Chemical mapping of a 177-nucleotide RNA with 2A3. Source: RMDB library OK1LIB, as collected in RNAgym. 2A3 adducts were read by reverse transcription with SuperScript II with manganese. Values cover nucleotides 27 to 126.
[RMDB]
RNA sequence: GGGAACGACUCGAGUAGAGUCGAAAAGAAGAGAAUAAGUUUGUUAGUGGCGUGUCCGUCCGCAGCUGGCAAGCUAAACCGCAUACAAAGCGGAAUAAAGGACGGCUAAGACGCGAAGAAGACGCGAACGAUAUAGGAGCUUCGGCUCCUAUAUCGUAAAAGAAACAACAACAACAAC
Reactivity to 2A3 in 0.01 (KOAc 150mM, MgCl2 10mM, bicine 150mM(pH8.5), 24C), signal-to-noise 2, nucleotides 027 to 126: g060a050a010g120a000g040a040a120u060a180a030g020u010u010u010g020u030u020a180g000u010g240g090c090g030u200g030u020c030c050g000u000c000c000g040c020a030g000c000u020g140g000c010a010a020g010c000u020a030a050a030c000c000g030c020a010u100a180c260a180a020a070g000c000g000g190a000a040u290a080a110a000g030g010a000c000g000g000c000u010a060a000g090a030c000g030c010g010a180a040g030a060a050g060a050c000g020c000g020a030